[RMDB]
RNA sequence: GGGAACGACUCGAGUAGAGUCGAAAAGCGAACCGUUGCGACCUUAGGACUGGAGAGAAUACACUAUUUCUUCCUGCAGCGCGAUGCUUCGGGUGCUGUGUUGGGGACGGCUGAGGAUGCCCUCCACCCAUAGCGAUGCGUUCGCGCAUCGCUAUGGAAAAGAAACAACAACAACAAC
Reactivity to 2A3 in 0.01 (KOAc 150mM, MgCl2 10mM, bicine 150mM(pH8.5), 24C), signal-to-noise 1, nucleotides 027 to 126: g080c020g010a040a030c000c010g000u070u110g050c030g080a230c020c000u030u150a070g090g030a100c040u070g020g040a100g000a000g000a150a030u150a070c090a000c140u140a120u150u100u030c000u030u080c040c000u030g000c000a030g000c000g000c020g060a030u160g020c080u110u070c030g060g000g000u080g000c020u000g030u020g020u170u110g010g000g060g000a040c090g070g030c040u030g000a090g140g040a090u050g030c000c000c000u000c010c010a070c000
Reactivity to DMS in 0.01 (KOAc 150mM, MgCl2 10mM, bicine 150mM(pH8.5), 24C), signal-to-noise 2, nucleotides 027 to 126: g030c030g000a030a070c060c010g040u020u010g000c040g030a080c080c090u010u000a110g020g000a140c100u050g010g000a070g020a100g020a040a080u010a120c270a090c160u020a080u010u000u000c040u000u000c000c030u010g000c110a070g020c030g030c030g000a130u010g000c060u010u000c030g000g020g020u010g000c010u010g000u010g010u030u000g020g010g000g000a040c260g010g000c020u000g000a150g010g020a100u000g000c010c000c040u010c010c050a050c160